[RMDB]
RNA sequence: GGGAACGACUCGAGUAGAGUCGAAAAACAAGCUGCACGUGCGUGCGAGCAGUUUUCGAAAUCGCACGUAUCACGUAAAGACGCAACUCUACUCGAGAAAGCGAGUCACGCAGACAGCGUCAAGGAACUAGGGCUUAACAUUCGUGUUAAGCCCUAGAAAAGAAACAACAACAACAAC
Reactivity to 2A3 in 0.01 (KOAc 150mM, MgCl2 10mM, bicine 150mM(pH8.5), 24C), signal-to-noise 1, nucleotides 027 to 126: a000c060a040a020g010c010u050g010c030a020c010g020u040g020c030g000u000g000c030g020a020g140c130a080g000u000u080u180u170c040g070a060a010a070u020c000g020c000a000c000g030u040a110u180c020a000c000g010u030a080a000a060g040a040c030g000c070a020a000c000u000c020u000a030c010u000c000g020a020g000a010a010a000g050c010g010a030g140u040c000a000c090g040c010a040g050a300c050a000g030c010g040u000c030a030a070g130g000a110a110
Reactivity to DMS in 0.01 (KOAc 150mM, MgCl2 10mM, bicine 150mM(pH8.5), 24C), signal-to-noise 2, nucleotides 027 to 126: a020c130a100a060g020c010u010g010c300a040c000g010u000g010c060g020u000g010c000g010a010g000c180a110g000u010u000u010u020c120g020a020a140a090u000c000g000c040a000c000g030u020a070u010c020a020c040g000u000a030a140a020g000a110c030g050c080a100a030c000u000c000u000a010c000u010c000g010a040g000a020a030a130g030c020g000a130g000u000c020a030c040g000c040a090g060a090c190a090g000c010g000u000c120a110a090g020g000a060a110